[RMDB]
RNA sequence: GGGAACGACUCGAGUAGAGUCGAAAACUCAAGAUUUGCUGAUGGGCUCUGCUUAUUUUGGAACUGUAAUGUACCAAAAUAUCCUAAUAAUGCAAUUGUAUGCAGGUUUGACACACGUGUGCAUUCUGAACGACACGGUUCGCCGUGUCGAAAAGAAACAACAACAACAAC
Reactivity to DMS in 0.01 (KOAc 150mM, MgCl2 10mM, bicine 150mM(pH8.5), 24C), signal-to-noise 3, nucleotides 027 to 129: c020u030c050a070a050g040a030u020u010u010g050c000u000g040a060u000g060g030g000c090u020c040u000g070c100u040u020a000u000u000u000u000g000g020a150a050c080u020g030u040a090a140u030g040u000a060c020c040a000a000a000a000u030a060u040c040c010u020a000a000u010a100a040u060g030c000a060a090u000u000g020u040a080u050g000c020a030g030g000u000u070u000g050a120c130a080c000a120c130g040u030g000u010g030c000a120u000u000c090u000g020a100a220
Reactivity to 2A3 in 0.01 (KOAc 150mM, MgCl2 10mM, bicine 150mM(pH8.5), 24C), signal-to-noise 4, nucleotides 027 to 129: c000u040c040a050a020g020a210u090u070u050g030c010u060g000a100u040g020g020g000c010u000c010u030g050c020u000u000a000u030u060u030u030g030g000a020a040c030u000g060u200a020a090u180g010u030a070c000c000a000a000a000a050u030a010u030c030c010u050a030a060u130a230a040u160g000c030a010a070u070u130g070u090a080u050g050c040a060g020g050u060u060u100g050a060c000a030c000a030c100g070u080g000u060g050c050a070u150u030c050u030g030a050a080